This 177-nucleotide RNA was probed chemically with DMS.
Values cover nucleotides 27 to 126.
RNA sequence: GGGAACGACUCGAGUAGAGUCGAAAAUAUAUGGUAUUGGCGAACUUAGCGAUGUGACGAUGUGAAUGAGUGCGGGAUGUACAGAAUAAGGUCAGUGGGAUAAUCACUGAAAUCAAUAUGAGAAGGAGGAUAUAGCUCCUUUCGAGGAGCUAUAUCCAAAAGAAACAACAACAACAAC
Reactivity to DMS in 0.01 (KOAc 150mM, MgCl2 10mM, bicine 150mM(pH8.5), 24C), signal-to-noise 1, nucleotides 027 to 126: u000a090u000a030u000g000g010u000a120u010u030g000g040c090g040a130a040c020u000u000a120g020c060g000a050u010g000u000g020a070c080g000a020u010g030u000g040a060a060u000g010a070g030u000g030c000g030g000g000a070u010g030u000a070c170a100g000a130a080u000a050a110g010g000u000c000a010g050u010g010g020g010a110u020a070a040u010c000a030c000u000g030a030a000a130u000c070a040a050u010a100u010g000a070g000a080a100g000g010a190

The reactions ran in a buffer of 150 mM KOAc, 10 mM MgCl2 and 150 mM bicine (pH 8.5), at 24 C.